[RMDB]
RNA sequence: GGGAACGACUCGAGUAGAGUCGAAAAUGUACGUCUUGAUGUCGAGCAGCUUGGGAACAUACUCCUCCUCAAACUUGCGCUUUCGCAUCUGCGACUUGACACUGUCAAGCGGCUCGUUCAGCACCUUGAUUGUUCCGUGGAUGACCCCCUUGAUAAAUCAAACAAGGUUCUUCGGAACCUUGUUUGAAAAAGAAACAACAACAACAAC
Reactivity to DMS in 0.01 (KOAc 150mM, MgCl2 10mM, bicine 150mM(pH8.5), 24C), signal-to-noise 1, nucleotides 027 to 156: u000g040u000a030c010g050u000c030u000u010g010a030u070g010u000c030g000a040g030c010a030g010c020u010u040g020g020g040a080a080c050a200u020a050c030u000c040c020u000c060c010u000c080a030a040a070c030u010u010g000c020g020c120u000u000u000c040g000c040a090u000c040u000g010c020g030a070c080u000u000g000a130c090a160c130u010g000u000c000a020a040g020c010g020g040c050u000c040g010u000u010c050a170g020c010a060c010c030u000u010g000a090u000u000g010u000u000c060c010g010u000g030g010a110u000g000a280c010c010c000c000c030u000u030g010a120u000a040a040a140
Reactivity to 2A3 in 0.01 (KOAc 150mM, MgCl2 10mM, bicine 150mM(pH8.5), 24C), signal-to-noise 1, nucleotides 027 to 156: u140g000u010a040c010g000u020c040u050u040g020a000u030g040u110c140g070a030g000c000a030g000c000u040u000g020g000g010a000a080c020a100u190a070c030u030c070c010u030c010c000u210c110a120a080a050c050u060u150g030c020g100c080u060u220u160c070g010c080a110u070c020u070g040c020g080a130c100u030u060g010a050c130a040c300u080g000u010c010a000a050g020c140g050g000c050u020c020g120u140u050c000a020g010c070a150c020c000u000u030g020a050u010u090g070u060u060c010c020g000u020g050g000a040u060g040a090c000c000c010c000c000u020u040g040a050u070a120a150a020

An RNA of 207 nucleotides, treated with DMS and 2A3 and read out base by base. The reactions ran in a buffer of 150 mM KOAc, 10 mM MgCl2 and 150 mM bicine (pH 8.5), at 24 C. DMS adducts were read by reverse transcription with MarathonRT.